The record gives the reactivity of an RNA of 207 nucleotides to 2A3. For 2A3 the reverse transcriptase was SuperScript II with manganese. It was measured as part of the RMDB library OK3TST. Values cover nucleotides 27 to 156.

RNA sequence: GGGAACGACUCGAGUAGAGUCGAAAAUGCCGCUCAGCUCUAGCCUUCUCCCUCAUUUCUUCAGGUGGGUGAGAAAUGGGCGACUGGAGUUUCCUGGGGAACAUCUUGGAGGAGGUUAAUGAGCACUCCACCGUCAUCGGCAGAGUCUGGCACACCAAAUACUCGUGAGGUUCGCCUCACGAGUAUUAAAAGAAACAACAACAACAAC
Reactivity to 2A3 in 0.01 (KOAc 150mM, MgCl2 10mM, bicine 150mM(pH8.5), 24C), signal-to-noise 1, nucleotides 027 to 156: u050g010c000c000g020c030u030c040a030g000c000u000c020u040a020g000c000c000u000u000c000u010c010c010c000u010c000a020u000u030u000c000u020u040c000a000g050g000u040g020g050g020u080g010a010g000a000a000a000u010g000g010g050c050g110a060c060u120g000g000a020g020u010u090u070c020c090u130g100g020g000g000a010a020c010a160u020c040u050u040g000g000a010g000g000a000g000g010u050u000a080a100u230g030a000g000c000a040c040u100c020c020a020c000c030g220u270c040a180u170c040g050g000c040a010g000a000g010u080c190u230g020g000c020a020c000a020c020c000a000